Structure probing data (DMS) for a 177-nucleotide construct.
The reactions ran in a buffer of 150 mM KOAc, 10 mM MgCl2 and 150 mM bicine (pH 8.5), at 24 C.
Values are in units of 0.01, from 0 to 300, in steps of 10.

[RMDB]
RNA sequence: GGGAACGACUCGAGUAGAGUCGAAAAGAUAUGGAAUCGGUCAUAGGACAUGUGGGUCGGAAACGACGCCACAACAGCCUAUGAGCCGAUUCCUAAGUCAAAAGGACGGUCGUUCGCGACCGUCCAACCUCAAGCAGAACUUCGGUUCUGCUUGAGGAAAAGAAACAACAACAACAAC
Reactivity to DMS in 0.01 (KOAc 150mM, MgCl2 10mM, bicine 150mM(pH8.5), 24C), signal-to-noise 1, nucleotides 027 to 126: g000a050u000a300u020g000g010a000a000u000c000g000g030u010c010a010u000a010g000g020a050c200a130u000g030u000g020g010g000u000c000g000g000a200a130a190c000g020a010c000g010c000c000a000c000a030a040c130a060g000c000c030u000a000u010g040a090g020c000c000g010a000u000u010c000c000u000a020a210g000u010c060a060a050a160a150g000g010a000c010g010g000u000c000g060u000u030c230g000c040g010a020c000c010g010u000c000c000a010a040